[RMDB]
RNA sequence: GGGAACGACUCGAGUAGAGUCGAAAAGCAACUCGGUUCGCCGAGUUGCAAAUAAAAUCAGCGGUAAAUUCGAGGCGUAAAUUACCGCUGAAGGCCUCGAUAAAAGUCUUCAGUUCGCUGAAGACAACCAGUAGGUAACGUUCGCGUUACCUACUGGAAAAGAAACAACAACAACAAC
Reactivity to DMS in 0.01 (KOAc 150mM, MgCl2 10mM, bicine 150mM(pH8.5), 24C), signal-to-noise 1, nucleotides 027 to 126: g000c020a010a000c010u000c000g000g010u000u000c180g040c020c010g000a000g010u000u000g020c000a040a050a020u000a030a070a080a080u010c000a010g040c000g010g000u000a010a030a090u000u000c050g000a150g010g030c140g050u000a010a000a080u020u000a010c000c000g000c000u000g010a020a020g000g000c030c000u000c120g010a140u010a040a070a120a060g010u000c000u000u000c000a010g010u000u010c150g000c000u020g000a020a030g000a000c000a020a000
Reactivity to 2A3 in 0.01 (KOAc 150mM, MgCl2 10mM, bicine 150mM(pH8.5), 24C), signal-to-noise 2, nucleotides 027 to 126: g000c000a000a020c000u000c000g050g050u080u100c180g020c070c000g010a010g020u020u010g000c000a000a010a000u040a010a010a000a040u060c000a010g000c000g000g000u020a030a060a170u100u040c060g020a100g170g120c060g050u040a050a070a000u020u000a000c000c000g000c000u000g000a000a010g030g010c000c000u060c030g000a020u120a230a140a020a020g000u010c000u000u010c010a010g020u040u060c130g040c080u010g010a000a000g000a000c000a000a010